[RMDB]
Structure probing data (2A3 and DMS) for a 177-nucleotide construct. The DMS profile rests on 2,383 reads. 2A3 is a SHAPE reagent: it acylates the 2'-hydroxyl of flexible nucleotides of all four kinds.
RNA sequence: GGGAACGACUCGAGUAGAGUCGAAAAUCCUGUUGCUCCUGUUGCUCCUGUUGGACCUGUUGCUCCGGUCGCUCCGGUUGCUCCGGUUGCUCCUGUUGGACCUACUAAUCCAUCUGCCCCUGUUGGACGAUAUCACCCGAUUCGUCGGGUGAUAUCGAAAAGAAACAACAACAACAAC
Reactivity to 2A3 in 0.01 (KOAc 150mM, MgCl2 10mM, bicine 150mM(pH8.5), 24C), signal-to-noise 2, nucleotides 027 to 126: u030c030c020u060g080u020u130g000c050u040c060c010u040g010u090u150g010c000u010c000c000u000g000u100u030g050g030a040c030c010u040g010u070u060g050c040u000c030c000g050g030u010c040g030c040u000c000c020g080g000u110u090g010c040u070c030c000g070g000u040u050g010c040u000c030c010u000g070u030u060g000g030a030c000c000u070a100c130u130a030a060u010c000c000a000u020c040u090g040c000c000c020c000u000g030u020u030g040g040a040
Reactivity to DMS in 0.01 (KOAc 150mM, MgCl2 10mM, bicine 150mM(pH8.5), 24C), signal-to-noise 1, nucleotides 027 to 126: u010c010c000u000g000u010u000g000c040u010c050c050u020g050u000u000g000c010u010c040c080u030g000u040u000g050g000a070c080c030u000g010u000u010g000c050u000c040c020g000g000u000c020g020c050u010c020c050g030g000u010u050g030c080u000c020c000g000g000u000u030g010c040u050c020c090u000g000u000u000g040g000a030c030c000u050a120c080u020a050a070u020c020c010a000u000c010u030g000c020c020c030c060u020g000u000u000g040g000a160
It was measured as part of the RMDB library OK1LIB.